[RMDB]
RNA sequence: GGGAACGACUCGAGUAGAGUCGAAAAUUAAUCGGGCUUGUUUGCGCCGCGUAUGCGCUUGCUUGCUUGCUUGCGGGCGAACGGGCUUGUUCCCUUUUGGCGCUUGCUUGCGCGCGGGCAAAAUGAACUUUAACGGAUUGUUCGCAAUCCGUUAAAGAAAAGAAACAACAACAACAAC
Reactivity to 2A3 in 0.01 (KOAc 150mM, MgCl2 10mM, bicine 150mM(pH8.5), 24C), signal-to-noise 1, nucleotides 027 to 126: u150u060a080a190u080c040g000g000g000c000u010u050g060u120u030u020g010c240g110c020c030g030c010g040u070a050u210g060c020g030c050u050u120g070c070u110u100g000c020u070u120g020c000u000u120g040c000g000g000g020c000g020a000a020c010g020g020g000c000u000u040g000u010u000c000c000c030u030u070u020u020g020g000c000g020c010u000u090g000c010u040u100g010c050g020c020g000c060g000g020g000c010a010a060a030a120u140g020a090a080
Reactivity to DMS in 0.01 (KOAc 150mM, MgCl2 10mM, bicine 150mM(pH8.5), 24C), signal-to-noise 2, nucleotides 027 to 126: u010u010a100a090u010c020g000g000g000c020u000u000g010u000u000u000g010c000g040c010c010g010c020g030u000a030u000g020c050g000c080u000u010g010c140u000u000g020c020u020u000g030c020u010u000g010c010g010g010g010c020g010a020a010c010g020g000g000c010u010u000g010u000u000c000c010c000u000u010u010u000g010g020c070g000c040u010u010g000c090u000u010g010c050g010c040g020c050g010g020g010c070a040a030a120a070u000g010a110a150